[RMDB]
Chemical mapping of a 177-nucleotide RNA with DMS and 2A3.
RNA sequence: GGGAACGACUCGAGUAGAGUCGAAAACUUGGCCGUCGCUCCGGUGGCGAUGCCGUCAUCGACGAUCACCGCGAUCCGCCCGGUCAACGGGAUGCGGUCACGCCCGCGGCGGAAGCGUUCCGCGCGGGGUCAACAGGAAAUUCGUUUCCUGUUGACCAAAAGAAACAACAACAACAAC
Reactivity to DMS in 0.01 (KOAc 150mM, MgCl2 10mM, bicine 150mM(pH8.5), 24C), signal-to-noise 9, nucleotides 027 to 126: c060u000u000g010g010c030c060g010u000c040g010c060u010c260c070g020g020u000g010g020c040g010a080u000g020c170c020g010u000c050a060u000c080g000a090c040g000a080u000c090a070c080c010g010c040g010a050u000c020c050g010c010c010c010g000g000u010c190a130a130c020g000g000g010a060u000g010c050g010g000u000c060a050c140g000c070c010c020g000c030g020g020c000g000g010a030a140g010c180g000u010u000c000c000g010c020g000c020g000g000
Reactivity to 2A3 in 0.01 (KOAc 150mM, MgCl2 10mM, bicine 150mM(pH8.5), 24C), signal-to-noise 9, nucleotides 027 to 126: c010u040u080g040g000c020c010g020u040c030g010c060u060c050c050g060g020u040g020g000c040g120a160u230g150c130c020g040u050c010a090u060c030g120a120c020g030a040u090c040a010c060c030g020c040g050a030u010c020c040g030c010c000c010g020g040u200c150a160a070c040g000g000g020a030u080g040c040g000g030u010c010a020c060g060c000c010c010g000c040g180g000c040g010g040a030a020g200c080g190u160u020c010c010g010c010g000c010g000g040
Notes
The data come from the RNA Mapping Database (RMDB), library OK2TRN.